[RMDB]
RNA sequence: GGGAACGACUCGAGUAGAGUCGAAAAGAUAUGGAGUGUUCGUGGUACUGUCAUCGAUCUCGGAAACGAGGGAGACAACCACGAGACACUCCUAAGUCAAACAAUACUACCUUCGGGUAGUAUUGAACGUGAAAGUAUCCUUCGGGAUACUUUCACGAAAAGAAACAACAACAACAAC
Reactivity to DMS in 0.01 (KOAc 150mM, MgCl2 10mM, bicine 150mM(pH8.5), 24C), signal-to-noise 2, nucleotides 027 to 126: g000a020u020a300u010g000g000a030g010u000g000u010u000c010g040u000g000g030u010a110c270u000g000u000c000a240u000c270g000a070u000c000u010c010g010g000a100a120a250c000g000a030g020g030g000a040g000a040c020a020a080c000c020a000c010g000a050g010a020c000a000c000u000c000c000u000a030a050g000u000c060a070a100a300c000a000a010u000a020c000u000a000c000c000u000u030c250g010g030g010u000a000g030u000a000u000u000g000a080a130
Reactivity to 2A3 in 0.01 (KOAc 150mM, MgCl2 10mM, bicine 150mM(pH8.5), 24C), signal-to-noise 1, nucleotides 027 to 126: g020a010u080a030u180g000g000a010g000u000g000u060u000c010g020u020g000g100u190a280c150u050g000u060c050a210u300c070g070a060u010c000u000c020g060g000a100a090a070c000g000a000g040g000g000a040g000a000c010a080a090c010c000a000c020g000a000g000a000c010a000c000u000c000c000u000a050a000g020u000c040a070a050a050c000a000a020u020a000c010u000a010c010c000u020u110c270g120g010g030u000a020g000u000a000u000u000g000a030a000